[RMDB]
RNA sequence: GGGAACGACUCGAGUAGAGUCGAAAAUAAGAAAAAUAAACAAGUGGUGGUAGUCCGCCACUCUAAGGGGACGCCUUUAGAAGGAGAGGCUAGGUGGUAUUCCGGUGUGGGAUACUUGGUAAUAUGUAAGGGGAUGGUACGUUCGCGUACCAUCCAACCAGAAUGAUUUCUUCGGAAAUCAUUCUGGAAAAGAAACAACAACAACAAC
Reactivity to 2A3 in 0.01 (KOAc 150mM, MgCl2 10mM, bicine 150mM(pH8.5), 24C), signal-to-noise 2, nucleotides 027 to 156: u140a030a020g070a100a140a030a020a010u190a040a130a030c060a150a070g010u000g010g030u020g000g110u070a090g050u060c020c020g000c020c000a010c010u000c000u010a040a030g000g010g000g020a010c030g080c010c000u050u050u050a040g010a060a010g000g010a020g010a010g000g000c020u010a020g050g050u050g030g000u040a050u010u060c030c040g120g110u200g040u180g080g000g000a000u000a020c020u030u120g040g000u080a060a060u070a100u240g100u090a080a050g130g000g000g000a000u000g010g020u000a000c000g010u000u060c160g000c000g090u000a000c000c000a000u000c000c000a000a010